RNA sequence: GGGAACGACUCGAGUAGAGUCGAAAACCCACUAUCUUUCUUACGAACUUGGCGGAACGACGAAAGAUAGUGGGGGCCUCACAGAAUACGGGUAAAGUAUAAUGAAACCGUACCAGAGAUUCAACCCCUAUAAUAAGGUCUUCGGACCUUAUUAUAGAAAAGAAACAACAACAACAAC
Reactivity to 2A3 in 0.01 (KOAc 150mM, MgCl2 10mM, bicine 150mM(pH8.5), 24C), signal-to-noise 4, nucleotides 027 to 126: c000c000c000a000c000u000a000u020c000u010u010u020c020u080u210a120c030g040a060a020c020u080u130g200g000c080g030g040a010a020c020g020a000c000g000a000a010a000g000a000u000a000g000u010g010g000g000g020g030c010c000u030c020a060c000a040g270a260a050u010a030c010g000g070g020u120a110a090a060g150u110a220u070a300a160u110g050a210a080a010c010c020g010u010a010c000c040a040g020a010g010a090u110u120c030a030a190c010c000c000
Reactivity to DMS in 0.01 (KOAc 150mM, MgCl2 10mM, bicine 150mM(pH8.5), 24C), signal-to-noise 4, nucleotides 027 to 126: c010c000c000a000c020u000a000u000c000u010u000u000c000u010u010a200c040g000a040a270c020u010u010g040g020c300g000g010a030a300c010g010a120c230g000a010a000a020g010a000u000a000g000u000g010g000g010g000g020c200c020u000c040a090c130a130g000a130a130u000a010c010g010g010g010u000a070a140a120g010u010a090u010a110a060u010g000a130a100a090c010c030g000u000a000c080c070a110g000a060g000a110u000u000c100a080a170c040c020c040
The record gives the reactivity of an RNA of 177 nucleotides to 2A3 and DMS. DMS (dimethyl sulfate) methylates the pairing face of unpaired adenines and cytosines. For 2A3 the reverse transcriptase was SuperScript II with manganese. The 2A3 profile rests on 3,001 reads. For DMS the reverse transcriptase was MarathonRT.